RNA sequence: GGGAACGACUCGAGUAGAGUCGAAAAAGAAAUCACCUCCAGAGGACCCCUUCAGCGAACAUGAAGCGCACUGAGCCGCCAGGAUGAGUCCAUAGCGAUAGGAGGGGAUGCUAGGAGUCGGCGGCGAAACGACACCUGUUCGCAGGUGUCAAAAGAAACAACAACAACAAC
Reactivity to 2A3 in 0.01 (KOAc 150mM, MgCl2 10mM, bicine 150mM(pH8.5), 24C), signal-to-noise 9, nucleotides 027 to 129: a010g100a010a030a020u080c030a060c030c010u000c010c010a040g000a070g080g030a080c010c000c000c000u040u050c050a030g010c010g050a030a030c020a090u120g040a060a020g040c040g000c060a060c100u060g030a010g020c010c000g010c020c010a050g130g060a130u200g040a030g080u000c010c000a150u070a020g030c030g090a060u100a100g000g030a010g000g000g000g000a010u100g020c030u040a030g020g020a050g060u060c040g010g000c000g000g000c000g010a030a040a010c060
Reactivity to DMS in 0.01 (KOAc 150mM, MgCl2 10mM, bicine 150mM(pH8.5), 24C), signal-to-noise 7, nucleotides 027 to 129: a080g000a030a080a050u000c090a110c020c000u020c040c000a180g040a100g050g030a090c020c030c030c040u040u040c060a110g020c050g000a000a000c060a120u010g000a070a050g030c220g000c040a070c130u030g030a150g030c000c040g040c030c030a120g000g060a130u080g000a110g040u040c000c000a050u040a080g050c060g000a100u010a120g020g020a040g000g000g000g000a030u030g020c030u020a060g000g000a040g000u000c070g000g000c050g020g020c010g000a030a050a070c090
Description:
This 170-nucleotide RNA was probed chemically with 2A3 and DMS. It was measured as part of the RMDB library 15KLIB. The reactions ran in a buffer of 150 mM KOAc, 10 mM MgCl2 and 150 mM bicine (pH 8.5), at 24 C. High 2A3 reactivity points to a flexible backbone, as in loops and unpaired stretches. For DMS, 29,446 sequencing reads were counted. For 2A3 the reverse transcriptase was SuperScript II with manganese.